The record gives the reactivity of an RNA of 207 nucleotides to 2A3.
RNA sequence: GGGAACGACUCGAGUAGAGUCGAAAAGCUACUUUCGAGUAGCAGAACCGCGUACUACUCAUUAGCCAUGGGAGGCAACAGCGUGGCUCCCAAAUAGGAGCCACGACAUGCCUUUAUGGCAAUAAUGAGUAUCGCCCGUACUGGCCUUCGGGCCAAACUGUGCAUCCUAUUUCGAUAGGAUGCACAGAAAAGAAACAACAACAACAAC
Reactivity to 2A3 in 0.01 (KOAc 150mM, MgCl2 10mM, bicine 150mM(pH8.5), 24C), signal-to-noise 3, nucleotides 027 to 156: g010c000u000a000c010u110u080u230c300g080a010g020u020a010g010c020a000g090a100a050c010c000g000c020g010u030a150c030u000a000c000u000c020a000u040u020a050g300c010c000a000u040g190g120g000a010g010g040c020a060a030c050a150g080c010g010u000g010g010c000u040c040c040c060a120a300a030u300a030g020g000a000g000c000c000a010c020g040a000c000a010u060g010c000c000u000u020u020a010u010g000g000c000a000a100u030a000a010u000g000a000g030u000a000u090c020g000c010c040c030g070u090a170c110u060g020g030c020c010u050u040c210g010g030g000c010c000a060a020a010
The data come from the RNA Mapping Database (RMDB), library RNAMAK.